The record gives the reactivity of an RNA of 207 nucleotides to 2A3 and DMS. Reactivities are rounded to 0.1 and cut off at 0 and 3.
RNA sequence: GGGAACGACUCGAGUAGAGUCGAAAAGAGACGGCGAGAGCCAUCGGUAGUAUAGCGAAAAUCAUAAAUGAGAAGAGCUCUAAACGCCUAAGUAGAGUUAAAAUAAUUAGACAGGCACUACUACAAACACGGCCUCGAACGUUCGCGUUCGAGGCAACAUCGUUAUAUACUUCGGUAUAUAACGAUGAAAAGAAACAACAACAACAAC
Reactivity to 2A3 in 0.01 (KOAc 150mM, MgCl2 10mM, bicine 150mM(pH8.5), 24C), signal-to-noise 5, nucleotides 027 to 156: g050a010g010a010c030g020g000c020g020a060g000a000g040c000c000a070u060c030g040g010u030a030g020u030a050u090a070g070c060g060a070a040a020a050u100c050a070u090a210a110a080u170g040a040g040a170a040g020a020g010c000u000c000u000a040a050a010c060g010c010c000u030a130a000g000u010a000g010a010g040u210u230a010a030a020a030u150a030a040u190u030a010g010a030c020a040g010g030c030a010c020u090a020c010u050a050c100a030a140a010c060a040c140g130g000c000c000u000c000g000a000a000c000g020u090u090c190g000c020g070u000u000c010g000a000g000g000c010a000a000
Reactivity to DMS in 0.01 (KOAc 150mM, MgCl2 10mM, bicine 150mM(pH8.5), 24C), signal-to-noise 1, nucleotides 027 to 156: g000a120g020a050c020g010g070c010g040a200g030a300g020c040c020a060u000c000g000g040u010a010g020u000a070u000a020g010c040g000a070a070a050a120u010c050a010u000a020a040a060u000g000a010g010a110a060g000a180g000c030u010c050u020a080a050a090c040g000c020c030u010a060a050g040u000a020g000a080g000u000u000a000a060a070a200u000a020a120u000u020a020g000a080c060a070g000g000c030a070c040u000a020c070u000a110c040a090a070a100c090a060c140g000g010c010c000u020c040g000a000a000c000g020u000u010c150g050c000g110u000u000c010g000a040g000g050c000a000a010